[RMDB]
This 177-nucleotide RNA was probed chemically with 2A3 and DMS. For 2A3 the reverse transcriptase was SuperScript II with manganese. Reactivities are rounded to 0.1 and cut off at 0 and 3.
RNA sequence: GGGAACGACUCGAGUAGAGUCGAAAAAAGCGACGAAUUCUGCCAAGAAUUGAUUCAAUAUGGAUUCGUACGUCUAAUCAUUCAGUUUGGGAGAAACUACAGUUCUGAAUUUGAGCAUUUAGUGCAAGAUAUGGAGUCGAUUCGUCGACUCCAUAUCAAAAGAAACAACAACAACAAC
Reactivity to 2A3 in 0.01 (KOAc 150mM, MgCl2 10mM, bicine 150mM(pH8.5), 24C), signal-to-noise 2, nucleotides 027 to 126: a010a000g020c000g020a010c010g010a000a000u010u000c030u040g110c100c060a100a050g100a130a120u210u190g060a130u300u080c000a030a070u070a080u260g010g010a040u040u030c020g000u020a250c000g000u010c000u040a080a040u050c010a010u050u000c000a030g060u020u060u150g030g050g030a140g120a100a110a020c060u160a100c040a120g050u000u050c010u000g060a070a080u130u090u130g060a060g000c020a010u080u110u110a080g030u000g040c010a080a010
Reactivity to DMS in 0.01 (KOAc 150mM, MgCl2 10mM, bicine 150mM(pH8.5), 24C), signal-to-noise 3, nucleotides 027 to 126: a120a070g020c030g000a040c000g010a010a020u000u000c010u010g020c200c220a110a140g020a070a060u000u020g000a130u010u010c070a090a110u010a090u010g000g000a020u000u000c020g020u000a060c040g000u010c030u010a080a080u010c070a050u000u000c030a040g010u010u000u000g000g000g000a130g010a100a070a100c110u000a050c130a060g010u000u000c010u000g000a020a050u010u010u000g010a060g000c060a060u000u000u000a060g040u000g020c080a100a130
The data come from the RNA Mapping Database (RMDB), library OK2TST. The RNA was probed in 150 mM KOAc, 10 mM MgCl2 and 150 mM bicine (pH 8.5) at 24 C. The DMS profile rests on 2,428 reads. For DMS the reverse transcriptase was MarathonRT.